RNA sequence: GGGAACGACUCGAGUAGAGUCGAAAACUUUAUCUGCUGUGAGUGUUAGACUUCCAUGUCAGGUAUCAAUUAAAUCAGGGGUUCUAUUGUUUAAAAAAUAGAUUUGGCUGGGCGCAGUAGCUCACACCUCUAAUCCCAGCACUUUGGGAGGCCGAGGGAAUUGGAGAAUAUUCGUAUUCUCCAAUUCAAAAGAAACAACAACAACAAC
Reactivity to DMS in 0.01 (KOAc 150mM, MgCl2 10mM, bicine 150mM(pH8.5), 24C), signal-to-noise 1, nucleotides 027 to 156: c070u020u010u000a100u010c050u000g020c070u000g000u000g000a060g020u000g010u010u010a110g040a070c020u010u000c060c000a080u000g010u010c040a030g050g000u000a070u000c060a030a100u000u010a040a090a140u010c040a060g020g010g070g020u000u010c000u000a050u000u010g010u010u010u000a000a040a050a080a070a050u000a000g000a160u000u000u000g020g020c000u000g030g020g000c040g040c040a250g010u000a170g020c030u010c020a030c060a040c020c020u000c020u000a150a100u000c020c010c010a070g010c100a060c140u000u010u000g020g020g000a010g010g030c120c090g010a100g030g010
Reactivity to 2A3 in 0.01 (KOAc 150mM, MgCl2 10mM, bicine 150mM(pH8.5), 24C), signal-to-noise 3, nucleotides 027 to 156: c030u150u140u090a070u110c010u070g010c030u040g070u080g070a040g020u040g040u170u110a080g070a090c040u120u040c060c000a050u120g100u120c020a000g040g000u040a040u080c060a070a220u110u230a170a070a060u120c060a050g000g000g030g020u060u040c030u010a020u000u040g070u060u300u220a060a140a040a020a020a050u050a060g020a070u110u110u130g040g000c020u040g000g020g000c000g010c020a060g070u100a020g020c020u000c030a040c000a020c000c000u000c010u010a000a010u000c020c000c010a000g070c120a110c150u270u190u020g000g000g040a000g020g000c050c070g010a010g050g040

This 207-nucleotide RNA was probed chemically with DMS and 2A3.
Reactivities are given for positions 27 through 156.
DMS adducts were read by reverse transcription with MarathonRT.
Reactivities are rounded to 0.1 and cut off at 0 and 3.
For 2A3 the reverse transcriptase was SuperScript II with manganese.